[RMDB]
RNA sequence: GGGAACGACUCGAGUAGAGUCGAAAAGGGACCACGCUGCUCUGGGCGGAAGAGUCUUCUGACUUUUCUAGCCUAUUCAGCUUCGCGUCCUUGAGGCCUGGCGUAACGCGGCUCUUGCCACCAGGAAGGACAAAAUUAAGUUCGCUUAAUUUUGUCCAAAAGAAACAACAACAACAAC
Reactivity to DMS in 0.01 (KOAc 150mM, MgCl2 10mM, bicine 150mM(pH8.5), 24C), signal-to-noise 5, nucleotides 027 to 126: g000g010g010a020c000c020a110c280g000c000u000g010c000u010c000u000g000g010g030c010g010g000a010a000g000a010g020u000c000u000u010c300u010g010a010c000u000u000u000u000c000u000a140g030c000c000u000a010u010u010c000a040g000c000u000u010c210g010c160g010u000c000c010u000u010g000a130g010g000c020c010u000g010g020c290g020u010a070a100c190g020c110g000g000c030u000c110u000u010g010c000c010a080c030c020a030g000g010a150a140
Reactivity to 2A3 in 0.01 (KOAc 150mM, MgCl2 10mM, bicine 150mM(pH8.5), 24C), signal-to-noise 3, nucleotides 027 to 126: g010g000g000a000c000c010a010c050g000c000u000g000c010u000c000u010g000g010g000c000g000g020a010a000g020a000g000u010c000u260u110c170u300g010a010c010u000u010u010u020c010u040a190g000c000c000u010a000u040u070c000a000g000c000u000u050c090g010c060g000u000c000c000u000u030g040a030g000g030c020c000u020g030g000c060g080u100a150a050c080g020c060g110g040c020u050c060u100u280g020c020c010a040c010c000a020g030g020a030a060